[RMDB]
RNA sequence: GGGAACGACUCGAGUAGAGUCGAAAACAUGGCGAUCUAGUACGAUCCGUACGUACGCUAUGAUCGCUAGAGUACGGAUCCCAUGCCAUGGCUAGCAGUACGAUCUGAUCGUACAUGAUCGUGCUAGACGGUAGCAUGUCUUCGGACAUGCUACCGUAAAAGAAACAACAACAACAAC
Reactivity to 2A3 in 0.01 (KOAc 150mM, MgCl2 10mM, bicine 150mM(pH8.5), 24C), signal-to-noise 3, nucleotides 027 to 126: c020a020u050g060g000c030g090a100u040c050u090a020g010u030a010c030g010a000u010c030c050g020u050a010c000g000u040a010c060g020c100u190a210u300g140a150u230c050g000c000u020a020g020a030g000u050a020c000g020g020a030u050c000c040c030a040u140g020c020c000a030u030g040g000c020u010a030g010c020a040g010u080a010c020g010a020u000c140u210g050a080u090c030g000u050a020c010a070u060g020a000u000c040g020u020g000c010u010a030g030
Reactivity to DMS in 0.01 (KOAc 150mM, MgCl2 10mM, bicine 150mM(pH8.5), 24C), signal-to-noise 2, nucleotides 027 to 126: c040a020u000g020g010c000g010a080u000c090u010a070g010u010a020c080g000a030u000c000c110g010u000a040c040g000u000a040c220g000c050u000a100u000g000a120u020c140g050c070u010a050g010a200g000u000a020c060g010g000a100u000c000c050c020a090u010g030c010c000a010u000g000g000c050u000a040g000c110a110g010u010a030c040g000a020u000c090u020g010a130u000c060g010u010a040c000a100u000g000a050u000c030g030u000g000c000u000a030g000